[RMDB]
RNA sequence: GGGAACGACUCGAGUAGAGUCGAAAAGUAUCCCUAGAUGAUAAAACACCGCACAUGGUUCGUAAGAGCGGUUAAAUUAGCAAGUAAUGCAAAUUACGCGAGGUAACGCAUGGCCUAGGCUCGUUAGAAAAGGGAGAAUCCUUCGGGAUUCUCCCAACCCUAUCAAUUACUUCGGUAAUUGAUAGGGAAAAGAAACAACAACAACAAC
Reactivity to DMS in 0.01 (KOAc 150mM, MgCl2 10mM, bicine 150mM(pH8.5), 24C), signal-to-noise 2, nucleotides 027 to 156: g000u000a210u000c000c000c000u000a160g000a160u010g000a200u000a020a100a090a220c040a100c030c040g050c020a130c100a150u000g010g000u000u000c060g010u010a130a190g010a110g000c000g000g020u010u000a070a020a150u000u000a170g000c040a130a060g030u000a090a100u000g000c120a080a090a080u010u000a050c080g020c080g010a110g050g010u000a020a050c050g000c060a050u000g020g000c000c010u000a090g010g000c000u020c060g040u000u000a100g010a040a050a060a190g010g020g010a050g000a010a040u000c000c000u010u000c300g080g000g000a010u000u010c000u000c000c000c000a010a000
Reactivity to 2A3 in 0.01 (KOAc 150mM, MgCl2 10mM, bicine 150mM(pH8.5), 24C), signal-to-noise 2, nucleotides 027 to 156: g020u010a060u020c040c000c010u010a070g010a120u160g020a060u150a100a040a060a010c080a020c010c000g050c000a020c010a050u060g240g020u170u070c020g070u110a070a000g030a030g100c020g000g000u030u050a020a070a000u030u030a030g010c060a170a000g070u100a100a050u150g050c040a030a030a100u100u040a030c040g010c010g030a060g030g080u050a020a000c010g000c110a010u080g010g020c010c010u030a060g080g050c040u020c040g040u030u040a050g080a060a110a050a040g000g010g000a010g000a000a000u000c020c000u000u060c110g020g000g000a000u010u000c000u000c000c000c000a000a010
Background: The data come from the RNA Mapping Database (RMDB), library M2RFPK. An RNA of 207 nucleotides, treated with DMS and 2A3 and read out base by base. For DMS, 2,232 sequencing reads were counted. DMS adducts were read by reverse transcription with MarathonRT.